[RMDB]
RNA sequence: GGGAACGACUCGAGUAGAGUCGAAAAACAAGUGCGGGCCUGGCUCAGCGCGGGGGGGCGCGGAGACCGCGAGGCGACCGGGAGCGGCUGGGUUCCCGGCUGCGCGCCCUUCGGCCAGGCCGGGAGCUGUAAGAAAAGACUUCGGUCUUUUCUUACAAAAAGAAACAACAACAACAAC
Reactivity to DMS in 0.01 (KOAc 150mM, MgCl2 10mM, bicine 150mM(pH8.5), 24C), signal-to-noise 3, nucleotides 027 to 126: a070c070a090a080g020u020g010c050g000g000g000c000c010u000g000g000c020u010c110a040g010c050g020c070g000g000g000g000g000g000g000c000g010c000g000g000a070g010a240c040c020g020c260g010a120g000g030c050g000a280c010c020g020g000g020a030g010c000g020g000c110u020g010g010g000u010u000c000c010c000g010g000c010u000g000c000g000c000g000c010c000c000u000u000c030g000g000c000c010a060g000g010c000c020g000g010g000a230g000c030
Reactivity to 2A3 in 0.01 (KOAc 150mM, MgCl2 10mM, bicine 150mM(pH8.5), 24C), signal-to-noise 5, nucleotides 027 to 126: a000c100a070a030g070u120g190c060g050g020g020c020c000u000g010g010c010u040c140a090g040c070g010c080g090g010g000g000g000g010g000c010g000c020g010g030a050g050a090c010c010g030c040g040a110g060g040c050g020a040c000c000g020g010g000a020g020c020g190g000c120u170g150g050g000u010u010c000c000c010g000g000c010u070g010c000g000c000g020c010c000c030u010u040c000g010g000c010c000a000g000g000c000c010g000g020g000a040g010c050